[RMDB]
RNA sequence: GGGAACGACUCGAGUAGAGUCGAAAAGAUAUGGAGAACCAAAUAGUGCCAUGCGUUUGACGACGUAUAAGGUCGGAAACGACCUUAUACGUCCGAGCAUGGACCCACUAUUUGGUUCUCCUAAGUCGUUAUAGUUAUGGUUCGCCAUAACUAUAACAAAAGAAACAACAACAACAAC
Reactivity to DMS in 0.01 (KOAc 150mM, MgCl2 10mM, bicine 150mM(pH8.5), 24C), signal-to-noise 7, nucleotides 027 to 126: g010a090u010a300u010g000g000a010g010a010a010c000c000a000a010a010u000a000g020u000g010c010c000a010u000g000c000g010u000u010u010g020a270c300g010a020c010g020u000a010u010a000a000g010g020u000c000g000g000a080a080a200c000g010a030c000c000u000u000a000u000a000c000g000u000c000c030g000a090g000c010a000u000g010g020a160c240c300c060a010c000u000a020u000u000u000g000g000u000u000c000u000c010c000u000a000a070g000u010c110
Reactivity to 2A3 in 0.01 (KOAc 150mM, MgCl2 10mM, bicine 150mM(pH8.5), 24C), signal-to-noise 2, nucleotides 027 to 126: g060a040u150a040u230g000g010a020g000a020a010c000c000a000a000a000u010a000g000u010g050c000c000a010u000g020c040g110u130u210u300g160a120c090g000a000c000g010u000a000u000a020a010g010g000u010c020g030g000a060a070a010c010g010a010c000c020u000u010a010u000a000c000g000u000c000c010g000a000g000c000a000u000g000g010a010c010c000c000a010c000u000a010u000u000u000g000g010u000u000c000u000c000c000u000a000a000g000u000c020